This 177-nucleotide RNA was probed chemically with DMS and 2A3. Values are in units of 0.01, from 0 to 300, in steps of 10. DMS adducts were read by reverse transcription with MarathonRT. The DMS profile rests on 2,512 reads.
[RMDB]
RNA sequence: GGGAACGACUCGAGUAGAGUCGAAAAAGAGACGGAUGGUACCUCGGAAGAACUGCUGUACGAGCGGCAGGUCCCAGAACGGGAUGUGCUCGGCCAUGGGCACGAGGUGCUUCUUCUUGUAUGCGCCUACCUCGUCCCUAUUCGUAGGGACGAGGUAAAAAGAAACAACAACAACAAC
Reactivity to DMS in 0.01 (KOAc 150mM, MgCl2 10mM, bicine 150mM(pH8.5), 24C), signal-to-noise 3, nucleotides 027 to 126: a160g000a040g010a040c230g000g000a020u010g010g010u000a010c010c010u010c010g020g010a170a110g000a080a260c060u000g010c060u010g010u000a080c170g010a130g010c000g020g000c040a040g030g000u000c010c000c000a180g010a080a240c210g000g000g010a030u000g000u010g010c010u000c020g000g000c160c140a050u010g000g000g020c020a050c000g010a040g000g010u000g000c010u000u000c020u000u000c010u000u010g010u000a040u000g020c120g010c010c030
Reactivity to 2A3 in 0.01 (KOAc 150mM, MgCl2 10mM, bicine 150mM(pH8.5), 24C), signal-to-noise 2, nucleotides 027 to 126: a010g040a010g000a000c120g030g040a040u160g080g040u030a010c000c000u000c000g060g040a110a020g040a140a040c020u030g040c050u050g040u100a140c110g060a070g040c000g040g000c020a020g070g090u020c000c000c000a040g150a120a070c130g000g020g020a030u060g060u060g090c010u030c020g130g000c100c000a130u140g010g010g000c050a000c050g000a000g000g000u000g000c000u040u010c000u030u010c000u000u090g060u060a040u080g020c020g060c040c010